[RMDB]
RNA sequence: GGGAACGACUCGAGUAGAGUCGAAAAGGUGAAAGCGAAUCGGGGAAGAUAAGCAAGCAGCAAAAAGGAACCGAUUCCCACCAAGUUCGGAAAGAGAUACCGGGCGAGGCGCUGAAGAAAGAAUCUCAAACUCCCGCAAGUUUCGACUUGCGGGAAAGUAUAAGUUAGGAUUCGUCCUAACUUAUACAAAAGAAACAACAACAACAAC
Reactivity to 2A3 in 0.01 (KOAc 150mM, MgCl2 10mM, bicine 150mM(pH8.5), 24C), signal-to-noise 6, nucleotides 027 to 156: g010g000u050g050a220a030a000g040c060g010a010a010u010c010g000g010g020g020a050a060g040a180u130a080a040g050c050a050a070g060c060a020g020c040a040a050a060a060a040g120g020a020a020c000c000g000a010u020u000c000c000c000a010c000c010a060a000g010u010u020c010g000g040a110a110a040g040a030g000a010u020a060c000c030g010g010g000c010g010a020g030g010c050g000c090u090g030a030a020g040a060a120a010g070a070a080u020c020u010c060a090a100a080c040u000c010c000c000g000c000a000a000g010u030u100u090c060g060a030c010u000u000g000c000g000g000g010a000a000a000
Reactivity to DMS in 0.01 (KOAc 150mM, MgCl2 10mM, bicine 150mM(pH8.5), 24C), signal-to-noise 2, nucleotides 027 to 156: g040g040u020g050a120a110a130g000c030g010a060a020u040c010g040g020g000g000a140a170g000a150u000a060a230g020c010a080a150g010c120a160g060c050a010a100a090a120a150g000g010a180a090c000c000g010a100u000u000c000c000c040a010c000c010a070a300g030u030u000c020g010g000a090a070a150g000a130g000a160u000a050c040c000g010g010g010c010g000a250g030g010c000g030c010u000g010a040a060g010a070a060a080g000a050a120u010c040u000c020a080a080a110c100u000c010c010c000g000c010a020a010g010u000u010u000c200g010a070c010u000u010g010c000g010g010g010a010a010a010